Source: RMDB library OK3TST, as collected in RNAgym. The record gives the reactivity of an RNA of 207 nucleotides to 2A3 and DMS. The DMS profile rests on 2,906 reads. The 2A3 profile rests on 932 reads.

[RMDB]
RNA sequence: GGGAACGACUCGAGUAGAGUCGAAAAGGACUCAAGGUGGGCAAAAUAGACAUGGGCCUUGCCUUGCAGUCUAGUGGGAAAAACAGAUUAAUCAUUUAAAUAUUUUGUUUCAAAGAAUGGUAAUGCAUGCAGGCAAGGUCCAGGCCUGUGGGAGAGAUGGUGAAAAUUUAUUCGUAAAUUUUCACCAAAAAGAAACAACAACAACAAC
Reactivity to 2A3 in 0.01 (KOAc 150mM, MgCl2 10mM, bicine 150mM(pH8.5), 24C), signal-to-noise 2, nucleotides 027 to 156: g000g020a020c040u010c270a010a030g020g030u030g020g060g040c020a040a070a020a060u180a070g040a000c050a090u030g000g000g040c000c000u000u000g000c000c000u040u170g000c000a000g000u000c010u000a020g010u120g010g030g030a000a140a030a060a030c000a020g070a040u090u110a130a020u080c000a010u030u080u210a030a150a070u100a140u060u140u170u110g070u010u170u050c070a090a070a010g020a070a100u040g020g030u110a040a030u080g100c060a010u070g020c010a000g000g000c010a000a000g030g000u020c010c000a000g010g000c000c030u040g020u010g000g030g030a110g060a040g030a020
Reactivity to DMS in 0.01 (KOAc 150mM, MgCl2 10mM, bicine 150mM(pH8.5), 24C), signal-to-noise 1, nucleotides 027 to 156: g040g010a080c030u010c040a060a100g010g000u000g000g010g000c080a060a020a110a090u000a080g030a020c030a060u000g020g020g000c000c000u000u000g000c000c000u000u020g030c040a040g000u000c040u000a150g020u000g010g000g010a070a030a020a120a070c020a070g000a080u000u000a050a040u000c010a020u000u000u000a100a080a170u020a120u010u010u000u000g010u000u000u010c090a090a080a240g000a050a030u000g000g050u000a040a060u010g000c000a080u000g030c000a020g010g020c010a040a010g010g000u000c000c010a030g010g040c000c000u050g000u000g010g000g000a100g000a130g010a190